[RMDB]
The record gives the reactivity of an RNA of 177 nucleotides to DMS and 2A3. Source: RMDB library OK2TST, as collected in RNAgym. 2A3 is a SHAPE reagent: it acylates the 2'-hydroxyl of flexible nucleotides of all four kinds. DMS adducts were read by reverse transcription with MarathonRT. The DMS profile rests on 3,107 reads. The reactions ran in a buffer of 150 mM KOAc, 10 mM MgCl2 and 150 mM bicine (pH 8.5), at 24 C.
RNA sequence: GGGAACGACUCGAGUAGAGUCGAAAAGGCGCGGGACAGACGAUUGAGGCCGCGCGUCAGGCGAUGGUCUGGACGCUGUUUCACUACGGCUUAACCGGCUGGUCGAUGUAUGCGCUGAUGGGCAUGGUGUCUUAGGUGUGUUCGCACACCUAAGACAAAAAGAAACAACAACAACAAC
Reactivity to DMS in 0.01 (KOAc 150mM, MgCl2 10mM, bicine 150mM(pH8.5), 24C), signal-to-noise 3, nucleotides 027 to 126: g020g020c010g030c010g000g000g000a080c050a040g010a070c040g000a110u000u000g010a060g020g000c000c010g030c070g010c020g020u010c050a050g000g010c010g030a180u030g020g010u000c010u000g010g000a040c030g000c000u000g020u000u010u000c160a100c090u000a130c030g020g000c010u000u000a090a120c110c050g000g000c010u000g020g020u010c020g000a100u010g000u010a060u020g000c040g000c000u010g000a130u010g010g010g040c090a070u000g010g000
Reactivity to 2A3 in 0.01 (KOAc 150mM, MgCl2 10mM, bicine 150mM(pH8.5), 24C), signal-to-noise 2, nucleotides 027 to 126: g040g000c040g000c050g080g060g070a020c020a040g040a060c010g060a080u010u100g080a060g030g010c000c000g000c000g000c030g020u040c010a040g060g000c030g200a280u300g060g050u030c010u020g050g010a000c010g000c040u040g030u030u060u050c080a060c100u190a050c010g000g000c000u080u010a050a030c020c010g000g000c010u060g050g060u040c020g020a030u070g060u110a030u100g010c040g000c000u020g040a030u070g010g040g040c020a050u150g070g000